[RMDB]
This 177-nucleotide RNA was probed chemically with DMS and 2A3. Reactivities are given for positions 27 through 126. Source: RMDB library OK2TRN, as collected in RNAgym. The 2A3 profile rests on 1,922 reads. For DMS the reverse transcriptase was MarathonRT. The RNA was probed in 150 mM KOAc, 10 mM MgCl2 and 150 mM bicine (pH 8.5) at 24 C. Reactivities are rounded to 0.1 and cut off at 0 and 3.
RNA sequence: GGGAACGACUCGAGUAGAGUCGAAAAUUGUCUGGGUCGGACCAGAUGUAGAUGUGAUCGUAGCCUUCAAAAAAUUUGGUCCAAAAAGUUUGCCACGAGGUGGCUCCAGGUAGGGCGACGGCCGACCACCGUAGUGUCAAUUCGUUGACACUACGGUAAAAGAAACAACAACAACAAC
Reactivity to DMS in 0.01 (KOAc 150mM, MgCl2 10mM, bicine 150mM(pH8.5), 24C), signal-to-noise 3, nucleotides 027 to 126: u010u000g010u000c010u000g010g010g010u010c160g010g000a070c010c000a010g010a020u010g010u010a170g000a070u000g010u010g000a060u000c080g020u010a210g000c020c010u000u020c020a000a030a070a110a090a030u000u000u000g010g010u000c020c020a070a090a080a110a110g000u000u000u000g000c000c000a020c050g010a120g010g020u000g010g000c020u010c020c030a040g010g000u000a070g010g010g000c040g000a040c090g010g000c030c020g000a100c060c060
Reactivity to 2A3 in 0.01 (KOAc 150mM, MgCl2 10mM, bicine 150mM(pH8.5), 24C), signal-to-noise 1, nucleotides 027 to 126: u130u060g020u040c020u020g020g010g020u130c080g050g020a060c010c020a010g000a040u050g050u080a050g030a050u090g130u120g100a070u100c030g000u040a040g070c000c030u000u090c100a200a060a040a020a050a060u030u030u040g030g000u000c020c000a010a130a000a060a080g140u180u190u080g000c000c010a040c080g200a140g080g150u000g010g000c010u000c010c000a000g000g050u030a010g050g000g050c030g000a030c040g030g030c010c010g030a040c000c030